[RMDB]
RNA sequence: GGGAACGACUCGAGUAGAGUCGAAAAGCUAAGUAAGCAAUCUCUGAGCCCAGCGAGACCGGUGGGUUAAUACGCGGAGGGGCUGCGGGGGAGGACUUAGGGGACCAGGACCUCAGUGAGGCCCCAGGCACUAAAAUAAGUUCGCUUAUUUUAGUGCAAAAGAAACAACAACAACAAC
Reactivity to DMS in 0.01 (KOAc 150mM, MgCl2 10mM, bicine 150mM(pH8.5), 24C), signal-to-noise 6, nucleotides 027 to 126: g000c010u000a050a090g000u010a070a090g020c030a130a140u010c020u010c010u010g000a090g000c010c000c010a120g010c030g010a130g010a070c070c030g010g030u020g000g010g010u000u010a060a070u020a100c070g020c040g010g010a100g020g010g000g010c060u010g000c080g000g000g000g000g000a160g000g010a050c050u010u010a080g000g000g000g000a140c060c060a090g000g000a080c020c010u000c020a110g010u020g000a060g000g010c020c000c010c080a080g000
Reactivity to 2A3 in 0.01 (KOAc 150mM, MgCl2 10mM, bicine 150mM(pH8.5), 24C), signal-to-noise 9, nucleotides 027 to 126: g020c020u070a040a060g050u080a120a030g110c020a050a100u020c020u000c020u070g060a020g010c000c000c000a010g040c010g030a090g050a070c070c020g070g120u150g040g050g000u060u080a090a040u140a130c050g010c040g040g050a120g030g010g020g000c030u040g030c040g010g010g000g000g010a040g030g010a020c010u030u050a040g000g010g000g030a030c020c020a020g030g070a040c010c020u030c020a070g050u030g160a020g030g020c000c000c010c000a010g090